[RMDB]
RNA sequence: GGGAACGACUCGAGUAGAGUCGAAAACAAAGCAUUGUGAAUAGCUGAAAAGCCCUUGACACAAUGUGAUUUCUGCCCAGUGCUCUGAAUGUCAAAGUGAAGAGAUUCAACCUAGCACGGGUAAACGAUACGUCCAACGGUUCGCCGUUGGACGUAUAAAAGAAACAACAACAACAAC
Reactivity to DMS in 0.01 (KOAc 150mM, MgCl2 10mM, bicine 150mM(pH8.5), 24C), signal-to-noise 1, nucleotides 027 to 126: c200a090a010a210g000c000a000u000u010g000u010g090a090a040u000a030g000c000u060g000a010a070a240a000g000c090c190c230u000u030g000a300c000a010c000a000a000u000g000u000g000a160u000u000u000c080u000g000c000c000c010a160g000u000g000c000u000c300u100g000a000a000u130g000u030c070a010a150a300g040u050g000a170a050g070a030g000a000u000u000c000a000a000c270c080u000a090g000c000a000c150g030g000g000u000a000a000a000c300g000
Reactivity to 2A3 in 0.01 (KOAc 150mM, MgCl2 10mM, bicine 150mM(pH8.5), 24C), signal-to-noise 1, nucleotides 027 to 126: c060a020a020a070g000c000a000u000u000g000u000g000a010a010u020a100g000c040u010g050a000a020a050a020g000c050c000c000u070u050g040a000c000a000c000a000a000u010g000u000g040a020u000u050u020c080u030g020c000c000c030a080g000u020g000c010u080c010u000g060a050a010u060g120u200c030a070a060a040g170u300g150a180a040g040a030g000a000u000u000c080a070a060c030c070u120a000g000c010a000c000g000g000g000u040a050a080a000c020g000